[RMDB]
RNA sequence: GGGAACGACUCGAGUAGAGUCGAAAAGAUAUGGAUCGUGUGGCGAGAGCCGGUCGGAAACGACCGAAGCUCGAUGAGCCAACGAUCCUAAGUCAAAGGUGUCCCAGUGUUCGCACUGGGACACCAACUGUAAUAAACCGUUCGCGGUUUAUUACAGAAAAGAAACAACAACAACAAC
Reactivity to DMS in 0.01 (KOAc 150mM, MgCl2 10mM, bicine 150mM(pH8.5), 24C), signal-to-noise 3, nucleotides 027 to 126: g000a000u000a010u020g000g000a000u000c010g020u000g040u000g030g010c000g030a050g010a010g020c020c020g000g000u000c000g020g000a010a000a030c000g000a010c000c000g010a110a150g000c000u000c000g010a140u000g010a300g000c000c000a030a010c000g010a000u000c000c000u000a000a050g010u000c020a070a140a160g010g020u000g010u000c000c000c000a010g020u000g000u010u010c300g020c030a000c000u000g000g000g010a000c000a000c000c000a000a030
Reactivity to 2A3 in 0.01 (KOAc 150mM, MgCl2 10mM, bicine 150mM(pH8.5), 24C), signal-to-noise 3, nucleotides 027 to 126: g000a010u020a000u040g000g000a000u010c030g000u300g070u100g250g030c040g050a140g000a000g070c030c000g020g010u000c010g020g000a040a020a000c010g000a010c000c020g010a110a020g000c030u000c020g000a250u120g010a000g000c000c000a000a000c000g000a000u010c000c000u000a000a000g000u000c050a110a080a170g000g000u000g000u000c000c010c000a010g000u030g040u040u110c300g030c200a000c000u000g000g020g010a000c000a000c000c000a000a000

The data come from the RNA Mapping Database (RMDB), library TTRDES.
An RNA of 177 nucleotides, treated with DMS and 2A3 and read out base by base.
For 2A3, 12,179 sequencing reads were counted.
For DMS the reverse transcriptase was MarathonRT.